RNA sequence: GGGAACGACUCGAGUAGAGUCGAAAAUUUAUAUUGGAUCAUACUGGUGAUUAUAAAAGUUCCUAGGAGGCUAGAAGAGCCAACCAACAGAGAAGGGAAAGCAGUCUGUUCUGAACAUAGGGACAUAGAGAUAUUUCCCAUUCGUGGGAAAUAUCUCAAAAGAAACAACAACAACAAC
Reactivity to 2A3 in 0.01 (KOAc 150mM, MgCl2 10mM, bicine 150mM(pH8.5), 24C), signal-to-noise 3, nucleotides 027 to 126: u020u110u030a150u030a050u120u150g050g030a010u020c020a010u060a220c100u140g080g030u040g050a040u040u100a060u090a150a030a000a020g030u010u000c000c000u000a010g030g050a040g020g000c020u090a030g070a240a010g050a170g050c020c000a010a110c040c000a050a090c000a010g020a000g020a110a050g020g000g090a000a100a000g050c030a040g070u000c000u020g020u060u000c030u060g040a050a020c010a090u110a060g020g000g020a030c040a030u060a030
Reactivity to DMS in 0.01 (KOAc 150mM, MgCl2 10mM, bicine 150mM(pH8.5), 24C), signal-to-noise 2, nucleotides 027 to 126: u010u040u080a100u030a060u010u020g000g030a010u000c030a070u040a100c090u010g010g040u000g000a050u010u000a010u010a030a040a070a180g030u000u000c010c000u000a060g040g000a220g000g000c000u000a100g010a070a060g010a090g010c010c020a020a120c050c030a030a060c050a050g000a110g010a060a070g020g000g000a040a070a030g000c130a070g000u000c030u000g000u000u000c040u000g000a060a070c100a070u040a090g000g000g010a050c070a030u050a100